[RMDB]
RNA sequence: GGGAACGACUCGAGUAGAGUCGAAAACCCUGUCGGUGAAGUCUCCCGCACGGGUCCUCUUCCUAGGUCCGGAGUCGAUCUCCAUCUGAUCCGUCCGGGCCCUCUUCGUCGGGGGAGCUCCCUCCCCAUGUCCAUCCCUUCGGGGAUGGAAAAAGAAACAACAACAACAAC
Reactivity to DMS in 0.01 (KOAc 150mM, MgCl2 10mM, bicine 150mM(pH8.5), 24C), signal-to-noise 3, nucleotides 027 to 129: c040c020c020u040g030u040c120g100g000u030g040a050a060g000u020c050u050c020c020c020g000c200a140c050g060g010g010u050c090c060u060c070u060u000c040c040u000a060g100g060u000c010c040g070g040a030g030u040c220g000a030u030c020u000c110c120a120u050c180u050g000a040u000c030c070g040u030c040c040g040g000g000c010c020c050u000c040u060u050c000g070u030c110g050g000g030g040g020a040g010c000u000c000c000c000u010c010c030c010c060a020u060g010
Reactivity to 2A3 in 0.01 (KOAc 150mM, MgCl2 10mM, bicine 150mM(pH8.5), 24C), signal-to-noise 8, nucleotides 027 to 129: c000c000c010u040g150u120c080g030g020u080g050a080a030g050u010c020u020c030c000c010g060c020a040c030g010g000g030u030c010c020u080c050u100u060c010c040u070a070g010g020u010c010c010g020g000a030g070u180c060g050a030u040c040u010c060c040a150u100c120u100g010a000u010c010c080g050u020c000c000g020g000g000c000c000c000u060c020u110u120c020g090u030c010g000g000g000g000g000a020g010c020u020c010c000c000u050c020c010c010c000a040u160g050
This 170-nucleotide RNA was probed chemically with DMS and 2A3. High DMS reactivity at an A or C suggests that its Watson-Crick edge is free. The data come from the RNA Mapping Database (RMDB), library 15KLIB. The DMS profile rests on 16,334 reads. 2A3 is a SHAPE reagent: it acylates the 2'-hydroxyl of flexible nucleotides of all four kinds.